Conditions: 150 mM KOAc, 10 mM MgCl2 and 150 mM bicine (pH 8.5), 24 C. This 207-nucleotide RNA was probed chemically with 2A3. 2A3 adducts were read by reverse transcription with SuperScript II with manganese. It was measured as part of the RMDB library OK3TST.
RNA sequence: GGGAACGACUCGAGUAGAGUCGAAAAAUAUUGCACAACCGCCCACCUCGUGUGGUCGAAAACGACGAACAUACAGCCGGUGGAGCUUCUCGAUGUGUCCCUGAUACCGCACCGUGACCGUGGCGCUGGUCGGGAUCUCGAAAGGCGCCUUGCGGCGAGGUCUACACUUCUUCGGAAGUGUAGACCUAAAAGAAACAACAACAACAAC
Reactivity to 2A3 in 0.01 (KOAc 150mM, MgCl2 10mM, bicine 150mM(pH8.5), 24C), signal-to-noise 1, nucleotides 027 to 156: a010u200a050u040u270g020c090a100c000a090a040c190c000g000c000c000c000a050c000c020u230c140g130u140g000u000g120g000u010c030g080a000a070a180a140c060g150a020c020g050a030a130c000a060u300a090c010a010g110c020c000g140g000u000g000g030a020g000c000u010u000c000u000c030g070a080u070g170u080g000u100c000c000c000u040g090a140u120a280c000c010g000c000a050c010c000g120u120g190a070c000c000g170u150g020g000c020g000c070u160g050g050u000c000g000g000g000a000u000c010u010c020g020a000a000a000g050g000c030g010c010c000u050u090g180c000g000g000c000g000